RNA sequence: GGGAACGACUCGAGUAGAGUCGAAAAUGCAAUUGGGGGCAGCAAGCUAGAGGUGGCAACUGCAUAAUUUGCAAGAAAUUGUUGGCUGAAGAUCAUACCGAUGAUAUUCUUGCAAGUUAUGCAGUUGGAUUAGCUGGUCAUUCGUGACCAGCUAAUCAAAAGAAACAACAACAACAAC
Reactivity to DMS in 0.01 (KOAc 150mM, MgCl2 10mM, bicine 150mM(pH8.5), 24C), signal-to-noise 5, nucleotides 027 to 126: u030g010c060a060a090u010u010g000g000g010g010g000c050a050g010c080a070a090g020c040u010a040g000a090g010g000u010g010g020c020a010a010c000u010g000c000a010u000a000a010u000u000u000g000c000a000a000g000a000a010a020u000u000g010u000u000g000g020c300u010g000a170a100g020a200u030c100a080u020a200c000c000g000a010u010g010a000u000a140u000u000c000u000u000g000c010a010a000g000u000u000a000u000g000c000a000g000u000u000g000
Reactivity to 2A3 in 0.01 (KOAc 150mM, MgCl2 10mM, bicine 150mM(pH8.5), 24C), signal-to-noise 6, nucleotides 027 to 126: u120g000c030a010a080u100u120g030g000g010g020g000c000a010g000c010a060a010g010c010u050a020g010a040g050g060u050g040g010c010a000a000c000u000g000c000a000u000a000a010u000u000u000g000c000a000a000g000a010a000a000u030u020g000u010u000g020g000c060u110g090a140a030g070a230u150c040a070u140a130c010c030g000a000u010g000a000u030a300u120u010c000u000u000g000c000a000a000g000u000u010a000u000g000c000a000g000u000u000g000
Structure probing data (DMS and 2A3) for a 177-nucleotide construct. Reactivities are given for positions 27 through 126. Values are in units of 0.01, from 0 to 300, in steps of 10. The reactions ran in a buffer of 150 mM KOAc, 10 mM MgCl2 and 150 mM bicine (pH 8.5), at 24 C. It was measured as part of the RMDB libraries RFM100 and RFMREP.